[RMDB]
RNA sequence: GGGAACGACUCGAGUAGAGUCGAAAACAGUGUCGGUUGCCUCGGCGACUUGCUACACCCAGGACCUGACCGUCGCUGCUGGAGGAACGCGUGGCAGAGACGGCGCCCAAGGUUGCAACCUGGUGCACGCCUAAUGAGUCUUCGGACUCAUUAGGCGAAAAGAAACAACAACAACAAC
Reactivity to 2A3 in 0.01 (KOAc 150mM, MgCl2 10mM, bicine 150mM(pH8.5), 24C), signal-to-noise 3, nucleotides 027 to 126: c050a040g020u020g020u060c020g040g010u010u030g000c030c000u050c090g080g000c010g020a040c000u040u200g020c030u030a010c000a030c000c010c000a000g000g020a080c030c060u080g100a190c020c000g010u010c010g020c050u010g030c000u060g100g110a220g080g210a290a110c080g040c060g200u150g000g000c010a000g000a000g000a010c000g000g000c010g000c010c010c000a060a050g140g010u040u070g030c020a020a030c000c000u010g010g010u030g020c020a010
Reactivity to DMS in 0.01 (KOAc 150mM, MgCl2 10mM, bicine 150mM(pH8.5), 24C), signal-to-noise 2, nucleotides 027 to 126: c110a120g000u000g010u010c040g000g000u000u000g000c010c020u020c300g020g030c030g020a030c030u000u010g040c160u010a040c040a050c020c010c000a030g000g000a100c110c050u000g010a110c010c010g010u000c010g010c000u000g010c000u000g010g040a190g010g010a070a060c130g010c150g000u000g000g000c010a010g010a020g010a010c010g000g010c050g010c040c000c030a140a100g020g000u000u010g000c060a050a070c010c010u000g000g000u000g010c060a180